RNA sequence: GGGAACGACUCGAGUAGAGUCGAAAAAUUGGACCGAACGGGGCUGGCAAGUCAACAUUAUUUAAUUGUAUUACAGGGAUCGUUCAGCCUGACUCAGGCACAAUCCAAUUAGAUGGUGUGAAAAUACAAGAGAAGUCUCCAAAUCAGAUUGCACAACGCGUACAAAUUGAUUCGUCAAUUUGUACGCAAAAGAAACAACAACAACAAC
Reactivity to DMS in 0.01 (KOAc 150mM, MgCl2 10mM, bicine 150mM(pH8.5), 24C), signal-to-noise 1, nucleotides 027 to 156: a060u020u000g000g010a150c000c020g020a140a060c030g010g030g000g020c080u000g000g030c090a040a100g000u020c070a120a040c030a060u000u000a110u020u010u010a080a050u000u000g000u000a080u000u020a230c060a080g030g000g020a020u000c050g020u000u000c090a110g020c010c010u000g000a100c070u010c070a030g020g000c010a080c050a070a080u000c040c020a040a120u010u010a050g010a070u000g020g000u000g010u010g010a040a020a040a120u000a090c070a050a190g010a070g000a110a120g020u010c000u010c010c000a060a110a100u040c060a050g040a130u000u000g000c010a080c010a110a060c100
Reactivity to 2A3 in 0.01 (KOAc 150mM, MgCl2 10mM, bicine 150mM(pH8.5), 24C), signal-to-noise 3, nucleotides 027 to 156: a000u050u050g040g030a000c030c020g000a050a000c020g000g000g020g000c020u000g000g010c030a050a060g040u070c040a040a020c020a070u000u120a080u060u110u090a120a050u040u030g060u080a070u040u070a050c050a060g000g080g090a080u040c020g060u110u050c060a020g040c000c010u040g040a140c040u060c160a010g010g000c020a010c020a090a010u020c030c010a020a030u060u030a030g030a060u030g000g070u020g000u000g030a050a100a020a020u170a040c050a060a030g020a000g030a170a010g000u010c010u000c070c020a050a060a020u030c010a010g150a190u080u140g050c040a020c000a040a060c120